This 177-nucleotide RNA was probed chemically with DMS. For DMS, 2,522 sequencing reads were counted. DMS adducts were read by reverse transcription with MarathonRT. It was measured as part of the RMDB library TTRINS.

RNA sequence: GGGAACGACUCGAGUAGAGUCGAAAAGAUAUGGAGCUGCGGUUAUUGUGAUCUCAUGCUACCCACCUUAGUAAUCGGAAACGAUUAUAAGAGGCAUGAGGAUCACAAUAACCGCAGCUCCUAAGUCCGUAGGAGUAAAGUUCGCUUUACUCCUACGAAAAGAAACAACAACAACAAC
Reactivity to DMS in 0.01 (KOAc 150mM, MgCl2 10mM, bicine 150mM(pH8.5), 24C), signal-to-noise 3, nucleotides 027 to 126: g000a120u000a300u010g010g020a020g040c000u000g000c000g020g020u000u000a000u020u020g020u010g030a010u000c010u000c000a010u000g010c030u000a080c050c090c230a300c140c000u000u000a010g010u010a010a010u000c000g000g000a140a110a220c000g020a010u000u000a020u000a000a010g000a090g010g030c020a000u000g000a040g030g010a010u010c000a000c010a000a000u010a000a000c030c020g000c010a000g000c000u000c000c000u000a010a080g010u000c030